[RMDB]
RNA sequence: GGGAACGACUCGAGUAGAGUCGAAAAGCAAACUUAUAGUUGCCAACGACGACAACUACGCUCUAGCUGCUUAAUGCGGCUAGCAGUCGCUAGGGGAUGCCUGUAAACCCGAAACGACUGUCAGAUAGAACAGGAUCGCCGCCAAGUUCGCUGUAGACAGUGUUACAAACUUCGGUUUGUAACACUGAAAAGAAACAACAACAACAAC
Reactivity to 2A3 in 0.01 (KOAc 150mM, MgCl2 10mM, bicine 150mM(pH8.5), 24C), signal-to-noise 3, nucleotides 027 to 156: g020c010a050a030a140c030u130u120a070u050a210g020u010u030g030c040c030a110a070c110g080a010c050g030a040c030a050a030c030u120a050c060g030c040u000c010u050a000g000c010u020g000c020u060u290a180a060u300g000c000g000g000c000u010a000g000c000a000g000u000c010g000c040u020a030g000g000g000g020a020u100g040c000c010u040g040u110a130a110a110c000c000c000g020a020a020a000c010g000a000c000u000g060u070c020a010g030a100u160a060g050a050a010c000a030g000g030a050u030c040g020c050c010g000c010c020a070a000g010u040u080c060g020c060u060g040u030a020g010a040
Reactivity to DMS in 0.01 (KOAc 150mM, MgCl2 10mM, bicine 150mM(pH8.5), 24C), signal-to-noise 2, nucleotides 027 to 156: g000c020a050a040a130c070u010u000a060u000a040g000u000u000g000c000c050a070a170c130g010a170c000g010a020c030a050a060c020u000a020c040g030c020u000c010u000a060g020c000u000g000c020u000u010a070a190u010g000c020g030g040c020u000a050g000c040a020g020u010c010g000c010u000a300g000g000g040g000a180u000g040c000c030u000g020u000a090a070a290c000c020c000g020a170a120a030c020g010a050c030u050g020u010c040a080g000a130u000a090g030a070a050c010a120g000g010a070u010c090g020c000c000g050c000c050a050a300g010u010u000c020g070c000u010g060u020a140g020a230

Background: The record gives the reactivity of an RNA of 207 nucleotides to 2A3 and DMS. It was measured as part of the RMDB library ARCHII. The 2A3 profile rests on 2,446 reads. Reactivities are given for positions 27 through 156. Values are in units of 0.01, from 0 to 300, in steps of 10. 2A3 adducts were read by reverse transcription with SuperScript II with manganese.